[RMDB]
Conditions: 150 mM KOAc, 10 mM MgCl2 and 150 mM bicine (pH 8.5), 24 C.
Structure probing data (DMS and 2A3) for a 177-nucleotide construct.
For 2A3, 1,121 sequencing reads were counted.
The data come from the RNA Mapping Database (RMDB), libraries RFM100 and RFMREP.
RNA sequence: GGGAACGACUCGAGUAGAGUCGAAAACGAGCGCAACCCUCGUCCUUAGUUGCUAACAGUUCGGCUGAGCACUCUAAGGAGACUGCCUUCGUAAGGAGGAGGAAGGUGGGGACGACGUCAAGUCAUCUUUGACCCCUGAAUUCGUUCAGGGGUCAAAAAAAGAAACAACAACAACAAC
Reactivity to DMS in 0.01 (KOAc 150mM, MgCl2 10mM, bicine 150mM(pH8.5), 24C), signal-to-noise 2, nucleotides 027 to 126: c030g010a160g000c070g000c070a120a130c040c010c010u000c040g000u000c000c000u000u000a000g000u030u000g010c000u000a060a070c010a000g000u020u010c250g000g000c000u000g020a040g000c000a000c140u010c000u000a000a000g010g000a000g000a030c030u000g000c010c010u000u000c020g000u090a130a200g010g010a030g010g000a000g020g000a010a010g010g040u000g000g000g000g000a200c120g000a090c000g020u020c140a070a120g010u000c130a140u010c100
Reactivity to 2A3 in 0.01 (KOAc 150mM, MgCl2 10mM, bicine 150mM(pH8.5), 24C), signal-to-noise 2, nucleotides 027 to 126: c030g030a070g110c010g020c030a050a190c000c000c000u000c050g080u020c000c000u010u000a000g020u020u000g020c000u000a060a000c000a010g000u000u000c040g120g000c000u000g000a000g000c000a030c040u010c000u010a000a000g000g000a000g020a000c040u050g010c020c000u000u020c010g070u100a080a080g020g030a010g010g010a000g000g000a000a010g000g050u120g010g000g020g060a010c120g000a030c010g000u010c020a090a020g090u030c030a060u020c120